[RMDB]
RNA sequence: GGGAACGACUCGAGUAGAGUCGAAAAAGGGUUGCAUUUAAACUGCUGGUAUUAAAAUAAGUAACCAGAUUGUUACUACGAACAUGAGUUUCAAGCAAUCCUACAAUACAUUCAGUAUAAACAUGCAGGUCCUACGCAGUUUCGACUGCGUAGGACCAAAAGAAACAACAACAACAAC
Reactivity to 2A3 in 0.01 (KOAc 150mM, MgCl2 10mM, bicine 150mM(pH8.5), 24C), signal-to-noise 1, nucleotides 027 to 126: a000g030g020g000u040u000g000c060a160u000u000u240a000a010a000c050u140g000c000u000g070g010u060a140u060u300a000a050a170a210u300a120a070g100u140a000a050c000c000a000g050a070u040u050g000u040u050a120c130u000a070c300g020a020a000c100a100u120g000a050g020u000u000u130c210a120a000g000c000a000a000u000c170c000u000a000c000a000a180u300a000c000a000u260u300c000a000g270u000a000u000a100a200a030c260a050u230g110c120a100
This 177-nucleotide RNA was probed chemically with 2A3. For 2A3 the reverse transcriptase was SuperScript II with manganese. Source: RMDB library OK1LIB, as collected in RNAgym. The RNA was probed in 150 mM KOAc, 10 mM MgCl2 and 150 mM bicine (pH 8.5) at 24 C.